[RMDB]
RNA sequence: GGGAACGACUCGAGUAGAGUCGAAAAAUGAGCAACAUCUUUAUCUUAAGAGAUUAGUUCAUCUAUCAGACUGAAAGUCUCAACACAGGAUCCGCCUCCAGGAAACUUAGAUGAAAACCUAAUUCAGCGGAGCUGUAAAUUUCGAUUUACAGCUCCGAAAAGAAACAACAACAACAAC
Reactivity to DMS in 0.01 (KOAc 150mM, MgCl2 10mM, bicine 150mM(pH8.5), 24C), signal-to-noise 3, nucleotides 027 to 126: a030u000g010a060g000c010a050a110c250a050u000c010u000u010u000a090u030c140u000u010a120a100g010a050g010a030u010u010a300g000u000u000c000a020u000c050u000a150u010c110a070g010a130c020u000g010a080a060a110g010u000c020u000c050a070a100c140a100c120a060g010g000a080u000c030c030g000c070c020u000c080c070a070g000g000a050a060a150c050u000u000a030g000a060u010g000a100a060a080a140c050c020u010a020a060u000u000c090a100g020
Reactivity to 2A3 in 0.01 (KOAc 150mM, MgCl2 10mM, bicine 150mM(pH8.5), 24C), signal-to-noise 2, nucleotides 027 to 126: a010u040g000a010g010c020a010a080c020a060u030c010u060u100u100a230u160c050u120u270a140a010g020a000g010a030u020u020a000g000u010u000c040a000u000c020u070a110u100c020a010g050a040c020u100g120a120a110a040g020u000c020u020c070a080a060c050a000c000a050g020g000a010u000c000c040g070c100c010u060c040c030a020g100g010a010a010a130c030u060u050a040g040a050u050g050a070a070a050a020c010c000u100a090a030u200u060c000a030g090